[RMDB]
Structure probing data (DMS and 2A3) for a 207-nucleotide construct. DMS adducts were read by reverse transcription with MarathonRT. Values cover nucleotides 27 to 156. The reactions ran in a buffer of 150 mM KOAc, 10 mM MgCl2 and 150 mM bicine (pH 8.5), at 24 C.
RNA sequence: GGGAACGACUCGAGUAGAGUCGAAAAUCCCAAAGGUUGCCGAAUCCGAAAGGUCAGGAGGAACCGCUUUUUGGGGUUAAUCUGCAGUGAAGCUGCAGUAGGGAUACCUUCUGUCCCGCACCCGACAGCUAACUCCAUAGGCAAUAAAGGAAGGAGAGAGCCUAUUUAAUUUCGAUUAAAUAGGCUCAAAAGAAACAACAACAACAAC
Reactivity to DMS in 0.01 (KOAc 150mM, MgCl2 10mM, bicine 150mM(pH8.5), 24C), signal-to-noise 1, nucleotides 027 to 156: u000c010c000c010a090a100a170g020g030u000u000g000c000c020g000a160a300u000c010c000g010a150a100a150g010g010u000c020a180g020g030a130g000g020a140a130c050c080g000c000u000u000u000u000u000g050g000g000g010u000u020a070a160u000c050u000g010c000a060g070u010g000a110a230g010c020u000g040c000a000g000u000a010g020g000g000a130u000a060c000c070u000u010c030u000g010u000c250c000c010g010c080a080c010c020c000g010a080c130a030g010c040u000a140a150c020u000c010c000a100u000a090g030g020c040a100a110u000a080a080a110g000g010a060a060g020g010a210g010a260
Reactivity to 2A3 in 0.01 (KOAc 150mM, MgCl2 10mM, bicine 150mM(pH8.5), 24C), signal-to-noise 2, nucleotides 027 to 156: u020c000c000c000a060a050a000g040g010u040u000g000c040c000g070a060a090u000c000c000g070a140a050a010g010g020u050c030a010g000g000a010g010g020a070a100c120c060g000c080u200u260u030u090u180g040g010g000g020u020u060a020a100u030c000u010g020c010a000g000u040g300a150a020g160c000u000g010c000a000g000u000a010g000g000g000a000u010a040c040c000u040u050c010u020g010u000c000c000c000g000c010a040c000c000c010g040a050c030a030g020c040u070a080a030c000u000c010c000a050u180a040g000g000c000a000a000u070a070a040a010g020g000a020a010g000g000a030g010a010